[RMDB]
RNA sequence: GGGAACGACUCGAGUAGAGUCGAAAACAGGAGGUUAGCAUAGCUCCAUUCUACUAUGCAGCUAGUCGUCGUUUUCGACGUCUAGGAUAGACCGCUACAGCAGGGUCUAUGAACUGCUGAUUACCGCUUCUCGUAGCGCGGGUUCUGGCUACGUACAAUUAUCCACGCCAUUCGUGGCGUGGAUAAUAAAAGAAACAACAACAACAAC
Reactivity to 2A3 in 0.01 (KOAc 150mM, MgCl2 10mM, bicine 150mM(pH8.5), 24C), signal-to-noise 1, nucleotides 027 to 156: c030a020g010g000a010g010g060u100u210a010g040c000a000u020a000g000c020u000c010c050a090u220u040c010u060a050c010u000a000u020g010c000a000g080c000u030a010g020u030c000g000u000c010g000u080u050u060u300c040g020a000c000g000u010c000u000a000g010g020a000u020a040g000a000c020c020g040c030u100a040c040a010g000c000a020g000g000g020u000c070u040a110u130g090a110a110c000u000g000c000u000g000a220u020u130a050c000c000g020c000u070u000c000u050c120g000u000a000g010c030g040c010g000g060g010u080u030c040u030g090g000c000u000a000c000g000u010a010c080a070